[RMDB]
RNA sequence: GGGAACGACUCGAGUAGAGUCGAAAAGCCCCAGCGGAGGUGUUCGCACGGGUGGAGGAAAUCGAAAAUGAUCAAUCCCAGACGAAUGAUGAAAUUGAAGAGGAGAGCGAAUCGGAUUCCGACGAAGAGAUACAGAAGAUUUCGAUCUUCUGUAUCUAAAAGAAACAACAACAACAAC
Reactivity to DMS in 0.01 (KOAc 150mM, MgCl2 10mM, bicine 150mM(pH8.5), 24C), signal-to-noise 9, nucleotides 027 to 126: g010c060c000c010c150a120g020c050g010g000a060g010g020u000g020u000u000c050g020c050a160c140g010g000g020u000g010g010a070g010g010a070a130a040u010c040g000a080a070a130a110u010g000a050u010c030a140a180u000c010c010c020a150g000a090c090g000a070a080u010g000a100u000g000a040a070a110u000u010g000a090a060g000a120g000g000a080g010a050g020c030g010a050a050u010c050g010g000a170u010u000c020c010g010a090c120g000a080a110g010
Reactivity to 2A3 in 0.01 (KOAc 150mM, MgCl2 10mM, bicine 150mM(pH8.5), 24C), signal-to-noise 5, nucleotides 027 to 126: g020c020c000c000c000a020g030c020g020g020a030g000g060u090g030u090u050c010g010c050a030c060g040g000g070u130g020g010a030g020g050a050a060a020u040c020g070a110a060a070a230u220g020a020u040c020a010a030u010c010c010c010a020g070a070c050g030a060a050u110g050a030u080g050a100a090a080u140u070g030a060a030g060a040g070g040a050g000a000g010c020g030a020a040u070c020g010g060a080u130u000c030c000g010a050c020g020a090a040g080